Structure probing data (DMS) for a 177-nucleotide construct. Conditions: 150 mM KOAc, 10 mM MgCl2 and 150 mM bicine (pH 8.5), 24 C. For DMS, 736 sequencing reads were counted.
[RMDB]
RNA sequence: GGGAACGACUCGAGUAGAGUCGAAAACUUCAGCAUCGAGAAAGCCGGAGCCGUGGAGGUGCCGGGCGACUGUGUGCCCUCCGAGGGUGACUACCGCUUCCGCAUCUGCACAGUCAGCGGACAUGGCGUGCUCACCUUUUUUCGAAAAGGUGAGCACAAAAGAAACAACAACAACAAC
Reactivity to DMS in 0.01 (KOAc 150mM, MgCl2 10mM, bicine 150mM(pH8.5), 24C), signal-to-noise 1, nucleotides 027 to 126: c040u020u000c070a110g020c020a050u000c070g010a220g010a130a070a100g020c030c030g020g000a170g040c050c030g010u000g010g010a060g000g060u020g040c010c230g000g020g000c040g020a060c080u050g010u000g020u010g020c000c020c010u060c240c060g010a110g000g010g000u010g020a020c050u000a180c130c030g020c020u000u010c050c110g010c010a050u000c020u020g000c030a000c020a130g010u000c000a110g030c100g010g000a100c080a000u000g010g020c210